[RMDB]
Background:
Structure probing data (2A3 and DMS) for a 177-nucleotide construct. The DMS profile rests on 6,837 reads. It was measured as part of the RMDB library M2PK50. For 2A3 the reverse transcriptase was SuperScript II with manganese. For DMS the reverse transcriptase was MarathonRT.
RNA sequence: GGGAACGACUCGAGUAGAGUCGAAAAUCUAACUCAUUCGUGAGUUAGAGUGAGCGCAGCGACCAUUGGGCCGGUGGCGCGGUGUCGGUGCCGCGCGUGGCGAUAGUGCUUGCUUCGGCAAGCACAAGCUCUUUGUCUUUUUCGAAAGACAAAGAGCAAAAGAAACAACAACAACAAC
Reactivity to 2A3 in 0.01 (KOAc 150mM, MgCl2 10mM, bicine 150mM(pH8.5), 24C), signal-to-noise 4, nucleotides 027 to 126: u000c000u000a000a020c010u000c010a030u080u070c230g100u030g010a000g000u000u000a000g000a010g020u090g070a050g000c060g000c060a040g030c020g060a060c010c010a080u070u140g110g060g000c000c030g130g100u130g100g020c030g000c030g000g010u050g030u070c160g060g070u210g030c010c000g010c010g020c000g020u040g010g000c030g030a060u110a140g000u010g000c000u000u000g000c000u020u030c170g070g000c000a000a000g000c010a000c000a000a010
Reactivity to DMS in 0.01 (KOAc 150mM, MgCl2 10mM, bicine 150mM(pH8.5), 24C), signal-to-noise 4, nucleotides 027 to 126: u010c000u000a000a010c000u000c000a030u000u010c190g020u000g000a020g000u000u000a010g000a040g010u000g020a120g000c060g010c030a070g000c030g000a070c040c030a160u010u010g020g000g020c020c030g010g030u000g010g010c030g010c000g010g020u000g000u010c180g000g020u010g000c020c000g000c020g030c020g020u000g000g000c050g000a080u000a070g010u000g000c000u000u000g000c000u000u010c170g040g000c000a020a010g010c000a000c000a040a070